[RMDB]
RNA sequence: GGGAACGACUCGAGUAGAGUCGAAAAGGAUUUUUCUUCGGAAAAAUCCAAACCCGAUGAAGCGGCACUUAGACAGCUUCAUACACGUAAGAGUGCAAAUAAAAACCGUUCAGUUCGCUGAACGGAACAUCUAAUUAGGCUUCGGCCUAAUUAGAUGAAAAGAAACAACAACAACAAC
Reactivity to DMS in 0.01 (KOAc 150mM, MgCl2 10mM, bicine 150mM(pH8.5), 24C), signal-to-noise 3, nucleotides 027 to 126: g010g010a000u000u000u000u000u000c000u000u010c160g020g010a000a000a000a020a010u000c000c000a030a090a110c000c000c000g030a080u010g010a030a020g000c010g040g030c010a040c090u000u000a050g000a080c140a200g020c000u000u000c000a010u010a120c090a070c260g000u010a090a130g010a070g010u000g000c050a140a070a090u000a030a060a120a110a100c000c000g010u000u000c000a010g000u000u010c170g020c000u010g000a010a000c000g010g000a020a060
Reactivity to 2A3 in 0.01 (KOAc 150mM, MgCl2 10mM, bicine 150mM(pH8.5), 24C), signal-to-noise 4, nucleotides 027 to 126: g000g000a000u000u010u010u030u040c050u070u090c160g030g010a010a000a000a000a000u000c010c000a030a010a030c000c000c000g000a040u030g000a000a010g010c040g040g000c070a010c060u050u030a040g050a130c030a030g010c010u030u020c000a000u030a020c170a000c070g090u060a040a040g050a030g110u020g020c050a040a120a030u210a070a090a020a030a040c000c010g010u010u000c000a000g010u010u070c150g010c080u010g000a010a000c000g000g000a000a010